[RMDB]
Annotation
Source: RMDB libraries RFM100 and RFMREP, as collected in RNAgym. The record gives the reactivity of an RNA of 177 nucleotides to 2A3 and DMS. The RNA was probed in 150 mM KOAc, 10 mM MgCl2 and 150 mM bicine (pH 8.5) at 24 C. For DMS the reverse transcriptase was MarathonRT.
RNA sequence: GGGAACGACUCGAGUAGAGUCGAAAAAGGCCUCUCUAACACAUAAAACAUUAAACCUUCGUAGAUUCAUGAGCCGAAUCGUAGGAUGCCCGGAAUUUCUGUUUCUGGAACAUCUUGAACCCUCGGCCUACAGCCAGUAAUUCGUUACUGGCUGUAGAAAAGAAACAACAACAACAAC
Reactivity to 2A3 in 0.01 (KOAc 150mM, MgCl2 10mM, bicine 150mM(pH8.5), 24C), signal-to-noise 9, nucleotides 027 to 126: a000g070g010c020c010u050c010u010c030u090a160a010c050a010c010a180u210a160a110a060a020c040a060u170u210a110a110a080c010c020u080u070c050g060u080a040g030a100u040u020c030a040u140g070a000g020c020c010g010a020a020u050c020g010u020a020g020g010a000u000g010c010c010c000g020g040a020a020u100u190u130c100u160g220u080u040u000c000u000g050g000a060a030c010a010u000c000u020u060g080a070a070c020c010c000u020c040g020g000c010
Reactivity to DMS in 0.01 (KOAc 150mM, MgCl2 10mM, bicine 150mM(pH8.5), 24C), signal-to-noise 5, nucleotides 027 to 126: a070g000g020c030c020u000c030u000c060u000a080a080c090a090c090a050u040a060a080a050a090c150a050u010u010a050a080a100c080c030u010u000c040g010u010a090g000a070u000u010c030a070u030g010a110g030c050c030g000a030a030u010c080g000u020a050g010g010a030u000g000c150c000c000g010g010a020a030u030u030u040c220u030g010u000u010u010c000u000g010g010a050a190c020a010u000c000u000u010g020a070a120c060c060c050u010c050g010g010c050